Source information
Structure probing data (2A3 and DMS) for a 177-nucleotide construct. The DMS profile rests on 4,441 reads. The RNA was probed in 150 mM KOAc, 10 mM MgCl2 and 150 mM bicine (pH 8.5) at 24 C.

[RMDB]
RNA sequence: GGGAACGACUCGAGUAGAGUCGAAAAUUAAGGUGCUACGCUACAUCAAGAAAUGCGUACACUGCCAACAAAACAAAGCUGCACGGCACGCGAAAUACGGUCACCUACAGUUCAGGACACCACCAACCCUUAUGUACGGGUUCGCCCGUACAUAAGGAAAAGAAACAACAACAACAAC
Reactivity to 2A3 in 0.01 (KOAc 150mM, MgCl2 10mM, bicine 150mM(pH8.5), 24C), signal-to-noise 9, nucleotides 027 to 126: u160u080a090a040g040g000u020g060c140u040a000c000g010c000u070a070c040a180u220c110a150a070g100a150a180a040u210g000c000g000u010a010c010a000c010u010g030c010c020a090a080c060a050a200a030a030c090a070a140a020g050c040u060g000c040a040c060g000g000c020a010c040g030c020g090a080a040a010u140a040c040g020g000u020c030a030c040c020u050a030c050a050g020u040u100c030a030g010g050a050c020a030c030c020a020c000c010a030a080c030
Reactivity to DMS in 0.01 (KOAc 150mM, MgCl2 10mM, bicine 150mM(pH8.5), 24C), signal-to-noise 3, nucleotides 027 to 126: u060u030a090a150g030g020u010g000c200u010a000c020g020c020u010a200c140a170u000c260a070a130g000a070a090a080u040g000c010g000u000a030c030a040c000u000g020c080c030a070a080c270a050a050a080a110c150a060a110a100g000c020u010g000c060a120c050g000g000c000a040c040g000c010g020a040a050a020u020a100c120g000g000u030c040a010c020c000u020a030c070a050g000u020u030c080a040g000g000a060c070a100c040c020a040c070c030a050a130c160